Chemical mapping of a 177-nucleotide RNA with DMS and 2A3. Values cover nucleotides 27 to 126. For DMS, 3,846 sequencing reads were counted.
RNA sequence: GGGAACGACUCGAGUAGAGUCGAAAAACCAUCCUAUUCGUAGGAUGGUGCACCAUAGCCGAUUGUAUAUAAUACCGCAGGCGGAAAAGCGGUUCAAAUAAGGAACUUGUCAGUUCGCUGACAAGAAGCAUUAUCUAGCUUUCGAGCUAGAUAAUGCAAAAGAAACAACAACAACAAC
Reactivity to DMS in 0.01 (KOAc 150mM, MgCl2 10mM, bicine 150mM(pH8.5), 24C), signal-to-noise 4, nucleotides 027 to 126: a030c000c000a010u000c000c000u000a030u000u010c210g020u010a010g000g020a010u000g010g010u000g010c150a140c010c010a100u020a120g020c020c030g020a150u000u000g020u010a070u020a120u010a090a120u000a030c020c030g030c010a120g000g020c040g010g010a060a050a080a080g000c010g010g000u000u000c140a030a060a070u000a090a120g000g010a110a150c010u000u000g000u000c000a020g010u000u000c220g030c000u000g010a010c000a010a000g010a070a140
Reactivity to 2A3 in 0.01 (KOAc 150mM, MgCl2 10mM, bicine 150mM(pH8.5), 24C), signal-to-noise 2, nucleotides 027 to 126: a000c000c000a000u020c000c000u010a020u060u060c210g030u050a000g010g010a000u000g000g000u000g030c020a030c040c000a060u130a050g020c010c010g060a070u060u150g160u080a100u000a030u030a220a170u060a090c000c010g010c040a020g100g000c000g000g030a030a120a010a000g000c000g000g060u070u160c080a030a090a120u160a130a130g130g050a060a110c000u000u000g000u000c000a010g000u040u080c250g000c110u010g010a000c000a000a020g010a000a000